An RNA of 177 nucleotides, treated with 2A3 and DMS and read out base by base. DMS adducts were read by reverse transcription with MarathonRT. For 2A3, 2,419 sequencing reads were counted.

RNA sequence: GGGAACGACUCGAGUAGAGUCGAAAAAUUUCAGCAGCGAAGAAGCAAAAGUGACGGUGGCUGCGGAAGAAGCGCCGGCUAACUACGUGCUAGCAGCCACGGUAAUACGUAGGGAGCAAGCGCAAUCAAUUUUAUUAAAAUUCGUUUUAAUAAAAUUAAAAGAAACAACAACAACAAC
Reactivity to 2A3 in 0.01 (KOAc 150mM, MgCl2 10mM, bicine 150mM(pH8.5), 24C), signal-to-noise 2, nucleotides 027 to 126: a000u030u030u020c010a010g000c000a020g000c030g030a110a020g050a150a010g100c060a040a130a100a060g070u060g040a010c020g010g060u010g040g000c010u010g000c000g020g020a030a000g070a050a010g030c000g000c000c010g020g030c010u000a030a000c010u010a000c010g010u010g000c010u020a020g050c070a030g020c000c030a050c030g000g000u010a020a000u030a030c000g000u010a000g010g010g010a000g000c000a000a020g000c030g000c020a000a050u040c000
Reactivity to DMS in 0.01 (KOAc 150mM, MgCl2 10mM, bicine 150mM(pH8.5), 24C), signal-to-noise 4, nucleotides 027 to 126: a070u000u010u010c010a070g010c040a020g010c020g000a230a140g000a090a250g000c060a060a040a120a110g010u010g010a200c010g000g010u050g000g000c010u010g010c000g000g000a020a020g020a090a080g030c010g010c000c300g000g010c010u000a030a040c010u000a020c020g020u000g000c030u010a060g010c030a060g000c060c080a040c060g000g000u010a040a100u010a020c010g000u000a020g000g000g010a020g000c010a070a090g000c020g000c020a070a070u040c050